Source information: Source: RMDB library M2RFPK, as collected in RNAgym. This 207-nucleotide RNA was probed chemically with DMS and 2A3. For 2A3, 2,680 sequencing reads were counted. The reactions ran in a buffer of 150 mM KOAc, 10 mM MgCl2 and 150 mM bicine (pH 8.5), at 24 C. The DMS profile rests on 3,240 reads.
[RMDB]
RNA sequence: GGGAACGACUCGAGUAGAGUCGAAAAUACCGUCUUCUCCCCGACGGUUUCAAUCCAUAGCUUCACGUUGUGUAGCGUAGGUGGAAGGUAUCGUGUGGUGUAUAAACACCACAUAGUCUCUUAGGGAUCAAGCUGAUAAACUUCGGUUUAUCAGCAAAGAUGCGUACAAGUUCGCUUGUACGCAUCUAAAAGAAACAACAACAACAAC
Reactivity to DMS in 0.01 (KOAc 150mM, MgCl2 10mM, bicine 150mM(pH8.5), 24C), signal-to-noise 2, nucleotides 027 to 156: u000a030c020c000g030u000c000u000u010c120u000c150c000c000c130g030a040c050g000g000u000u000u000c050a070a170u000c000c020a110u000a210g010c030u000u010c050a060c040g060u000u010g040u000g060u030a070g000c040g020u000a050g000g090u000g040g020a120a010g010g070u000a020u000c090g030u020g040u000g000g020u000g070u000a200u000a200a200a090c000a020c010c000a030c000a000u000a040g010u000c010u000c030u000u010a120g000g020g000a100u010c060a040a150g010c050u010g000a010u000a020a010a000c020u000u000c300g000g000u020u000u000a020u000c010a010g020c000a000a010
Reactivity to 2A3 in 0.01 (KOAc 150mM, MgCl2 10mM, bicine 150mM(pH8.5), 24C), signal-to-noise 4, nucleotides 027 to 156: u050a000c000c000g020u010c000u140u020c000u060c000c000c010c010g000a000c000g010g000u010u020u070c030a030a020u030c010c000a040u060a120g000c010u080u060c010a030c070g300u300u300g010u070g050u070a000g010c050g040u070a090g020g130u050g010g040a040a020g060g020u110a040u160c070g000u000g000u000g030g000u010g040u030a090u110a290a220a020c000a000c000c000a000c000a000u010a010g000u000c010u000c010u110u190a100g000g020g030a030u090c120a100a020g000c000u000g000a000u000a000a010a000c020u030u020c080g000g000u000u000u010a000u000c000a000g010c000a000a010